[RMDB]
RNA sequence: GGGAACGACUCGAGUAGAGUCGAAAAUUGACCUGUGGUCACGUGCCGUUAUUGGCUGGUCAAUGUCGCCACGCAUGACGGCGCAACUGGCCUGCGAUGCCCUGCAGAUGGCGCUGUGGCGGCGUAACUUCCCUUAUUCAUUCGUGAAUAAGGGAAGAAAAGAAACAACAACAACAAC
Reactivity to DMS in 0.01 (KOAc 150mM, MgCl2 10mM, bicine 150mM(pH8.5), 24C), signal-to-noise 9, nucleotides 027 to 126: u010u010g010a110c030c020u010g030u000g020g010u000c030a050c170g020u000g010c010c010g010u000u000a050u010u010g020g020c020u000g000g010u000c080a100a100u010g010u000c100g010c000c000a040c120g010c090a070u010g010a040c060g000g010c010g010c040a050a060c180u000g010g010c020c010u000g020c080g000a100u000g000c030c020c030u000g000c030a080g010a130u010g000g010c080g010c020u000g020u000g010g010c060g010g010c030g010u000a050a160
Reactivity to 2A3 in 0.01 (KOAc 150mM, MgCl2 10mM, bicine 150mM(pH8.5), 24C), signal-to-noise 9, nucleotides 027 to 126: u050u060g080a060c010c020u080g040u100g160g000u020c020a010c090g020u030g020c000c000g010u020u030a090u140u160g160g000c030u020g010g010u040c050a090a180u200g090u170c040g000c020c000a020c070g040c040a060u080g030a020c020g000g000c010g000c010a040a070c080u050g020g000c000c000u010g020c030g040a050u120g020c010c010c010u020g000c010a030g040a260u190g100g040c060g000c100u060g020u040g020g010c040g000g000c010g020u020a040a040
Chemical mapping of a 177-nucleotide RNA with DMS and 2A3. DMS adducts were read by reverse transcription with MarathonRT. The 2A3 profile rests on 55,772 reads. The RNA was probed in 150 mM KOAc, 10 mM MgCl2 and 150 mM bicine (pH 8.5) at 24 C. The DMS profile rests on 44,492 reads. Values cover nucleotides 27 to 126. Source: RMDB library OK2TRN, as collected in RNAgym.